[RMDB]
RNA sequence: GGGAACGACUCGAGUAGAGUCGAAAAGCAAAGGCAAAAGGGAGCUUGACUGCGAGACCUACAAGUCGAGCAGGGACGAAAGUCGGGCUUAGUGAUCCGGCGGUGCCGUAUGGAAGGGCCGUCGCUCUACUGCCUGUAGAUUCGUCUACAGGCAGUAAAAAGAAACAACAACAACAAC
Reactivity to DMS in 0.01 (KOAc 150mM, MgCl2 10mM, bicine 150mM(pH8.5), 24C), signal-to-noise 7, nucleotides 027 to 126: g010c070a070a080a060g000g010c040a050a060a090a070g010g010g010a050g010c040u010u000g010a140c020u000g010c030g000a300g000a030c010c030u010a130c300a110a120g010u000c020g000a300g010c020a030g010g000g010a060c040g000a080a040a120g010u000c020g000g000g010c030u000u000a060g020u000g010a080u000c090c010g020g010c010g000g010u010g030c010c000g000u010a100u000g010g010a120a150g000g000g010c020c030g010u000c010g000c120u000c060
Reactivity to 2A3 in 0.01 (KOAc 150mM, MgCl2 10mM, bicine 150mM(pH8.5), 24C), signal-to-noise 4, nucleotides 027 to 126: g030c030a030a010a120g110g000c030a020a060a010a070g060g060g010a020g010c010u080u070g070a050c000u000g000c000g010a030g010a020c000c010u060a060c060a090a030g030u030c010g010a010g000c000a010g010g020g010a010c010g080a090a020a000g020u030c010g030g000g000c020u070u100a040g040u080g110a060u050c030c000g000g000c010g010g030u140g300c010c020g050u090a120u180g150g150a120a150g000g010g000c010c000g000u010c000g000c010u010c010

Description: Chemical mapping of a 177-nucleotide RNA with DMS and 2A3. For 2A3, 6,316 sequencing reads were counted. The reactions ran in a buffer of 150 mM KOAc, 10 mM MgCl2 and 150 mM bicine (pH 8.5), at 24 C. DMS adducts were read by reverse transcription with MarathonRT.